[RMDB]
RNA sequence: GGGAACGACUCGAGUAGAGUCGAAAAUCCACUAUGAAUCUAGUCACUAAAUAAACACAAUUAGCUACUGUGUGUAAUAGUGAGUGUUGAUAACACAAAAUAAUAGUAUAGUUUUGGAAUAUUAUACGCGCCCUUGCUCCGUUCGCGGAGCAAGGAACUCAUAAGCUAUGUUCGCAUAGCUUAUGAGAAAAGAAACAACAACAACAAC
Reactivity to DMS in 0.01 (KOAc 150mM, MgCl2 10mM, bicine 150mM(pH8.5), 24C), signal-to-noise 2, nucleotides 027 to 156: u000c020c010a160c150u000a100u000g000a140a120u000c100u040a140g020u010c000a000c020u000a030a010a040u010a150a270a000c000a040c020a050a060u000u000a210g050c200u000a090c100u020g030u030g000u010g000u010a110a260u000a010g000u010g000a040g020u010g010u010u000g010a120u010a130a190c020a080c030a120a040a030a060u000a070a300u000a060g000u010a060u000a090g010u010u010u000u000g000g000a140a120u010a070u010u000a040u000a060c050g050c110g010c120c010c000u010u010g000c000u000c000c010g030u010u010c300g010c060g040g010a030g000c000a000a040g000g020a010a040
Reactivity to 2A3 in 0.01 (KOAc 150mM, MgCl2 10mM, bicine 150mM(pH8.5), 24C), signal-to-noise 4, nucleotides 027 to 156: u050c020c000a040c080u160a170u210g130a150a070u080c080u100a070g080u030c000a010c010u000a000a020a050u030a010a050a000c000a000c000a000a090u120u110a130g060c060u180a070c030u020g000u000g000u000g010u040a030a040u000a030g000u010g000a010g000u030g020u000u050g060a110u190a230a030c040a000c030a040a150a020a040u190a100a050u050a140g020u020a020u010a060g030u010u050u130u190g040g050a090a050u080a030u120u120a040u060a040c060g000c000g060c030c000c000u000u000g000c000u020c010c010g010u040u050c080g030c020g150g000a000g000c000a000a010g000g000a000a000

Structure probing data (DMS and 2A3) for a 207-nucleotide construct. The 2A3 profile rests on 1,815 reads. In probing experiments dimethyl sulfate is read out at A N1 and C N3, which are open when not base-paired. The reactions ran in a buffer of 150 mM KOAc, 10 mM MgCl2 and 150 mM bicine (pH 8.5), at 24 C. For DMS the reverse transcriptase was MarathonRT.